[RMDB]
RNA sequence: GGGAACGACUCGAGUAGAGUCGAAAAUUGCAGGAAUACCACUUGUCCCCAGAUUCAUUUUAUAGACACAGAAAAGUGGUAAUGAAUUAGAUUAUGGUGGUGUUCCAUAAUCAUCCAUGAGGCAAGCGCAUAAAUCAGGAUUCGUCCUGAUUUAUGCAAAAGAAACAACAACAACAAC
Reactivity to 2A3 in 0.01 (KOAc 150mM, MgCl2 10mM, bicine 150mM(pH8.5), 24C), signal-to-noise 4, nucleotides 027 to 126: u080u080g030c040a050g000g020a010a010u010a030c000c000a000c040u050u060g060u080c000c020c000c000a010g000a050u000u010c010a010u000u020u070u050a120u070a060g250a040c010a000c020a030g300a210a210a130a030g010u030g000g030u010a000a010u000g010a010a000u030u050a020g070a110u170u090a100u300g020g000u000g000g000u010g010u010u000c000c000a000u040a000a050u070c030a010u000c050c030a110u130g020a030g100g000c040a040a030g080c030
Reactivity to DMS in 0.01 (KOAc 150mM, MgCl2 10mM, bicine 150mM(pH8.5), 24C), signal-to-noise 5, nucleotides 027 to 126: u010u020g020c110a120g010g010a050a050u000a020c010c000a020c000u000u000g010u000c010c010c010c030a300g000a020u000u000c010a020u000u000u020u010a170u010a130g020a180c020a030c020a080g020a120a090a110a090g010u000g000g010u000a020a020u000g000a000a010u000u000a070g010a090u010u010a040u000g000g010u000g000g010u000g020u000u000c000c000a090u000a060a060u000c050a060u010c100c070a090u000g000a080g000g010c030a060a070g010c220